Structure probing data (2A3 and DMS) for a 177-nucleotide construct. Values cover nucleotides 27 to 126. 2A3 adducts were read by reverse transcription with SuperScript II with manganese. DMS adducts were read by reverse transcription with MarathonRT. The 2A3 profile rests on 2,400 reads. The DMS profile rests on 3,545 reads.
RNA sequence: GGGAACGACUCGAGUAGAGUCGAAAACACACUGAAUCGCUCUUUGUUUGAGCUGUUGCAGCUUGGCUAAGGUGAUCAGCUCGUCCAUACCUUGAGCGACCAUGAUCUCUUGUAGUGCCUGAACGGAGGUGAAAAUAGGGUUCGCCCUAUUUUCACCAAAAGAAACAACAACAACAAC
Reactivity to 2A3 in 0.01 (KOAc 150mM, MgCl2 10mM, bicine 150mM(pH8.5), 24C), signal-to-noise 3, nucleotides 027 to 126: c040a000c000a020c030u070g040a050a050u040c000g000c000u010c000u050u050u100g080u040u160u260g020a000g000c020u010g050u050u270g100c080a060g000c050u100u110g150g000c080u120a030a000g090g070u020g040a030u060c000a000g010c000u000c010g100u030c100c020a150u130a130c020c000u040u040g020a020g020c030g010a000c000c030a090u160g060a150u060c030u020c000u060u030g100u090a110g000u050g100c010c010u010g060a080a010c070g070g050a050
Reactivity to DMS in 0.01 (KOAc 150mM, MgCl2 10mM, bicine 150mM(pH8.5), 24C), signal-to-noise 4, nucleotides 027 to 126: c080a090c170a120c080u010g010a120a120u010c030g010c000u000c000u010u000u000g000u010u010u010g000a030g010c000u000g010u000u020g010c030a040g000c010u000u000g000g030c150u010a100a020g020g000u000g000a030u010c020a010g000c090u010c040g000u010c120c130a100u010a090c070c090u000u000g000a050g020c020g010a030c140c080a070u000g010a100u000c030u000c070u000u000g020u000a040g020u000g010c010c020u010g000a070a080c120g010g010a160